RNA sequence: GGGAACGACUCGAGUAGAGUCGAAAAGGCUCCACCUUCGGGUGGAGCCAUCUACCGAGAAAGCACCUCGGUAUAAAAGUGGAACCCUUGGAAACAAGGGAAUAAGCCCCUGGUUCGCCAGGGGCAAAUCUUGUACAGUAUUCGUACUGUACAAGAUAAAAGAAACAACAACAACAAC
Reactivity to DMS in 0.01 (KOAc 150mM, MgCl2 10mM, bicine 150mM(pH8.5), 24C), signal-to-noise 4, nucleotides 027 to 126: g000g010c000u000c010c010a000c010c010u000u000c200g030g040g040u000g000g000a000g030c000c000a000u000c020u000a150c010c010g010a010g000a070a050a200g010c090a050c050c000u000c000g000g010u010a010u000a020a030a040a030g030u000g010g000a160a150c000c010c000u000u000g000g010a170a140a190c000a000a000g010g010g010a040a020u000a140a150g000c000c000c000c000u000g000g000u000u020c190g010c000c010a010g010g000g000g010c000a000a000
Reactivity to 2A3 in 0.01 (KOAc 150mM, MgCl2 10mM, bicine 150mM(pH8.5), 24C), signal-to-noise 1, nucleotides 027 to 126: g000g000c000u030c010c000a000c030c010u020u100c280g050g000g000u000g000g010a000g000c000c010a000u000c000u000a000c010c010g000a010g000a030a190a020g100c030a050c030c000u000c020g000g050u010a010u030a060a040a000a010g070u070g070g020a090a080c000c010c010u000u000g000g020a030a070a010c010a000a020g010g000g000a020a000u010a000a000g000c010c000c020c000u010g020g050u030u050c170g020c050c000a000g000g000g000g000c000a000a010